[RMDB]
RNA sequence: GGGAACGACUCGAGUAGAGUCGAAAAUUACACUGAGAGCAUUUAGCCUGAUUACUCUUUAAAUCAAAUCAGGCAAGAGAGAGAAACUCGAGAGGUGAAAACCCCACAGCAUUCUGAAAUGUAUUUGAAGGCAACGCUACCUUCGGGUAGCGUUGAAACUAAGUGAAGGAUUCGUCCUUCACUUAGUAAAAGAAACAACAACAACAAC
Reactivity to DMS in 0.01 (KOAc 150mM, MgCl2 10mM, bicine 150mM(pH8.5), 24C), signal-to-noise 1, nucleotides 027 to 156: u000u000a210c080a150c070u000g000a000g020a090g040c070a300u010u000u000a130g000c000c000u000g000a020u010u000a040c040u000c020u020u000u000a040a000a000u000c040a000a130a010u000c010a010g000g030c000a070a070g020a070g010a110g020a180g000a110a060a180c020u000c080g000a040g000a100g000g000u000g020a120a180a200a100c000c000c030c010a170c090a090g030c000a060u000u000c020u020g000a060a050a100u010g000u000a060u000u050u060g020a110a170g000g040c000a020a100c020g020c060u000a020c010c000u000u000c210g020g050g020u000a000g020c030g000u010u000g010a020a140
Reactivity to 2A3 in 0.01 (KOAc 150mM, MgCl2 10mM, bicine 150mM(pH8.5), 24C), signal-to-noise 2, nucleotides 027 to 156: u090u040a060c030a060c060u120g080a020g020a020g000c050a070u040u040u060a000g000c000c000u000g000a000u000u040a050c020u020c040u190u270u160a060a040a050u240c140a000a000a010u000c000a000g000g000c000a030a000g010a000g000a000g000a000g060a100a070a010c000u000c040g050a070g000a020g090g000u020g010a040a040a030a000c000c020c040c000a050c070a050g030c010a030u080u110c030u080g050a070a090a130u120g050u020a170u050u090u270g050a110a030g090g000c000a000a000c000g010c000u010a010c010c000u000u030c040g050g000g000u000a000g000c000g010u000u000g010a000a000
The record gives the reactivity of an RNA of 207 nucleotides to DMS and 2A3. For 2A3 the reverse transcriptase was SuperScript II with manganese. The DMS profile rests on 1,466 reads. Reactivities are rounded to 0.1 and cut off at 0 and 3. DMS adducts were read by reverse transcription with MarathonRT. Reactivities are given for positions 27 through 156.